[RMDB]
RNA sequence: GGGAACGACUCGAGUAGAGUCGAAAAGAUCAUCAAACUCAUGCACGAGUACGGGGCUGACAUGGACACACGCACACCCAAAGACUGGACUCCCCUCAGCUACUGCAAGGCUAAAGGGAAGUAUGGGGCCUAGUAUCCGAUUCGUCGGAUACUAGGCAAAAGAAACAACAACAACAAC
Reactivity to 2A3 in 0.01 (KOAc 150mM, MgCl2 10mM, bicine 150mM(pH8.5), 24C), signal-to-noise 1, nucleotides 027 to 126: g020a080u090c050a030u040c060a120a080a070c000u000c050a040u140g020c060a010c120g010a020g030u090a070c050g000g020g050g000c020u020g000a010c000a090u110g030g020a020c030a000c000a000c120g080c020a030c000a040c050c010c020a010a160a000g050a020c030u090g000g030a020c000u010c000c000c000c000u000c050a020g000c030u070a030c030u130g080c030a140a110g000g030c000u000a110a000a000g000g020g030a000a040g000u020a050u070g030g030g080
Reactivity to DMS in 0.01 (KOAc 150mM, MgCl2 10mM, bicine 150mM(pH8.5), 24C), signal-to-noise 2, nucleotides 027 to 126: g040a140u000c090a090u010c060a100a130a140c050u000c030a020u000g010c080a050c120g000a080g000u000a040c150g020g010g000g010c050u010g000a070c110a030u020g000g040a040c090a030c080a070c120g000c070a130c100a100c020c000c060a090a050a100g000a070c050u000g020g000a060c030u000c000c010c010c030u000c200a100g010c010u020a090c090u000g050c140a050a090g010g000c000u010a040a070a040g020g010g000a020a020g020u000a060u000g000g000g030